Structure probing data (2A3 and DMS) for a 177-nucleotide construct. Values cover nucleotides 27 to 126.
RNA sequence: GGGAACGACUCGAGUAGAGUCGAAAAUUAAACCGGGAGCCGAAGCGCAACGGCGACCGGAAGGGCGACGGGAACCCGAAUCUCAACCCGGAGCCCAAGCGCAAGUGAAACGGGAAGCGCAAAAAAACAAAGUGUAUUUGUUCGCAAAUACACUUUGAAAAGAAACAACAACAACAAC
Reactivity to 2A3 in 0.01 (KOAc 150mM, MgCl2 10mM, bicine 150mM(pH8.5), 24C), signal-to-noise 1, nucleotides 027 to 126: u080u000a070a050a030c000c000g000g020g000a000g030c010c010g040a110a020g090c010g010c090a080a000c010g010g000c030g000a010c000c000g000g000a040a120g000g010g000c000g000a020c010g010g020g000a040a140c030c000c040g020a070a110u190c170u040c130a080a140c000c000c010g000g010a000g000c000c000c010a000a010g010c030g000c000a070a080g080u210g110a220a050a060c080g010g090g080a060a040g000c010g000c000a030a110a020a000a030a000a000
Reactivity to DMS in 0.01 (KOAc 150mM, MgCl2 10mM, bicine 150mM(pH8.5), 24C), signal-to-noise 2, nucleotides 027 to 126: u000u000a080a080a110c000c010g000g010g000a300g000c000c000g060a070a040g020c080g020c080a200a200c000g010g000c010g060a170c000c020g010g020a020a020g040g000g010c000g000a140c000g000g000g010a130a110c040c000c010g030a120a060u000c090u000c160a080a130c010c000c000g000g000a230g030c000c000c060a030a020g010c070g000c020a110a090g000u020g020a040a080a080c110g000g000g000a100a100g010c000g030c040a000a000a030a030a100a040a190
Notes:
The RNA was probed in 150 mM KOAc, 10 mM MgCl2 and 150 mM bicine (pH 8.5) at 24 C.